[RMDB]
RNA sequence: GGGAACGACUCGAGUAGAGUCGAAAAGUUAAUCUUGGAGUCAAUCCUAGAGGACUGAUACCUAACCAUAUUUGGCAGAUGGAUGUCACACACUUGCCAGAAUUUGGAAAAUUAAAAUAUUUACACGGGAAUUAAUACAGUUCGCUGUAUUAAUUCCAAAAGAAACAACAACAACAAC
Reactivity to DMS in 0.01 (KOAc 150mM, MgCl2 10mM, bicine 150mM(pH8.5), 24C), signal-to-noise 1, nucleotides 027 to 126: g000u000u000a120a150u010c000u000u000g020g020a040g010u000c110a060a300u010c040c010u000a010g000a040g000g000a020c040u010g010a170u000a190c000c010u000a070a180c000c000a000u000a110u000u000u000g000g000c020a040g000a080u000g000g020a180u000g000u020c210a050c250a140c030a000c020u010u010g010c010c000a020g000a010a110u000u000u000g000g020a140a080a050a090u000u020a020a000a110a140u000a080u000u000u000a180c000a090c300g000
Reactivity to 2A3 in 0.01 (KOAc 150mM, MgCl2 10mM, bicine 150mM(pH8.5), 24C), signal-to-noise 1, nucleotides 027 to 126: g000u030u050a070a160u050c020u050u000g020g020a050g070u230c190a090a250u000c000c000u000a050g000a000g080g020a020c030u050g020a150u150a300c000c000u030a020a100c000c020a030u030a050u060u040u000g000g000c050a020g110a100u100g110g200a070u150g210u300c020a070c030a030c000a000c080u000u100g000c020c000a050g120a220a170u000u030u000g020g000a070a240a070a000u160u070a140a060a030a140u290a030u120u290u120a080c080a000c100g090